Source: RMDB library OK3TST, as collected in RNAgym. The record gives the reactivity of an RNA of 207 nucleotides to DMS and 2A3.
RNA sequence: GGGAACGACUCGAGUAGAGUCGAAAAUGUCGAUUUCGGAGUCGCGCUCCGACGAGGCGGACACCAUCGAUAUCGUGCUCGACGACUCGAAAAACGAUCUGGACAUUCCGAAGCGCGGCGCGACGAUCAAGGCGUCGAUCGGAUGGGCCGGCGAGCCCCAUACAAUAACCUUCGGGUUAUUGUAUGGAAAAGAAACAACAACAACAAC
Reactivity to DMS in 0.01 (KOAc 150mM, MgCl2 10mM, bicine 150mM(pH8.5), 24C), signal-to-noise 2, nucleotides 027 to 156: u000g000u000c000g020a060u010u000u000c050g000g000a130g020u010c020g030c090g030c050u010c010c030g030a110c190g000a290g000g030c020g020g020a040c030a060c010c010a170u000c020g010a070u000a060u000c050g030u000g000c060u000c000g030a140c020g000a080c020u040c010g010a050a080a100a060a160c050g010a150u000c030u010g000g010a110c020a140u000u000c000c010g030a110a080g010c020g020c040g020g010c020g020c010g010a140c020g010a170u000c110a070a130g020g040c050g020u000c020g010a130u000c040g000g030a110u000g000g000g020c010c000g010g000c090g010a100g000c000c050
Reactivity to 2A3 in 0.01 (KOAc 150mM, MgCl2 10mM, bicine 150mM(pH8.5), 24C), signal-to-noise 7, nucleotides 027 to 156: u070g000u020c010g010a040u070u110u110c080g020g030a060g020u040c040g000c010g050c300u080c080c010g070a130c110g040a110g030g130c030g020g010a020c010a030c040c030a040u030c020g010a010u020a030u110c100g060u150g080c060u010c020g030a040c020g020a020c010u000c010g050a100a020a020a020a020c050g030a110u050c030u060g030g010a020c010a050u240u070c050c010g010a060a030g100c180g000c010g150g010c010g010c010g060a120c060g030a070u150c130a110a090g110g000c010g010u010c010g020a050u020c000g020g000a020u020g040g150g060c010c000g000g010c020g010a030g030c030c000
For 2A3, 6,634 sequencing reads were counted. For DMS, 4,518 sequencing reads were counted. The RNA was probed in 150 mM KOAc, 10 mM MgCl2 and 150 mM bicine (pH 8.5) at 24 C.